[RMDB]
RNA sequence: GGGAACGACUCGAGUAGAGUCGAAAAGAAAGAAGAAAGAGACACUGAGUGAGAAAAAUAAACGUAAUAGUGUCGGCAAUGGGUGAAAAACACGUAGCCAUUUCUCACAAACGCGAAGAAACGCGAAGCGCUGACUACUGUUCGCAGUAGUCAGCGCAAAAGAAACAACAACAACAAC
Reactivity to DMS in 0.01 (KOAc 150mM, MgCl2 10mM, bicine 150mM(pH8.5), 24C), signal-to-noise 1, nucleotides 027 to 126: g010a210a000a080g000a180a100g000a010a110a060g010a060g020a000c100a030c060u000g020a130g000u040g020a000g000a000a070a050a190a030u050a050a050a070c150g080u060a040a050u020a060g010u020g000u020c080g000g000c020a060a000u020g020g000g010u000g000a060a000a060a040a010c090a000c000g090u000a120g030c060c020a060u000u030u000c000u000c000a010c000a050a050a130c000g000c030g000a050a050g030a070a100a070c000g000c000g000a070a130
Reactivity to 2A3 in 0.01 (KOAc 150mM, MgCl2 10mM, bicine 150mM(pH8.5), 24C), signal-to-noise 2, nucleotides 027 to 126: g120a000a050a000g130a050a060g070a050a090a000g110a000g010a010c020a010c060u070g010a060g030u060g020a030g070a030a150a000a000a000u240a020a140a010c030g030u060a000a090u050a230g020u010g000u010c050g000g000c020a040a060u120g120g040g000u100g070a170a000a000a010a000c050a010c030g070u030a040g040c010c000a000u000u000u020c020u030c010a000c000a020a090a040c010g010c010g020a120a270g080a070a240a030c000g010c000g000a030a000